[RMDB]
RNA sequence: GGGAACGACUCGAGUAGAGUCGAAAAUCAUGAUGCUGUUGAUGCCGGGCAGCCAGGUAUCGUGAUAAAGCAGGCCGAUACCGAUGGGUAUGGCUAGCCAAUGACGCCAGCGAUGGACACGAUAUGCGCAGUUCACAACGUUCGCGUUGUGAACUGCAAAAGAAACAACAACAACAAC
Reactivity to DMS in 0.01 (KOAc 150mM, MgCl2 10mM, bicine 150mM(pH8.5), 24C), signal-to-noise 1, nucleotides 027 to 126: u000c070a130u000g000a070u020g070c010u000g010u010u020g010a290u030g000c000c000g000g000g000c040a040g000c020c060a110g010g010u000a020u000c000g000u000g000a090u000a070a210a170g030c090a300g030g000c020c000g000a010u000a000c030c000g030a140u030g030g000g010u000a000u000g000g020c020u000a060g030c070c030a120a100u010g000a120c150g000c030c010a070g000c000g000a070u020g000g010a120c110a090c030g000a020u010a080u000g000c190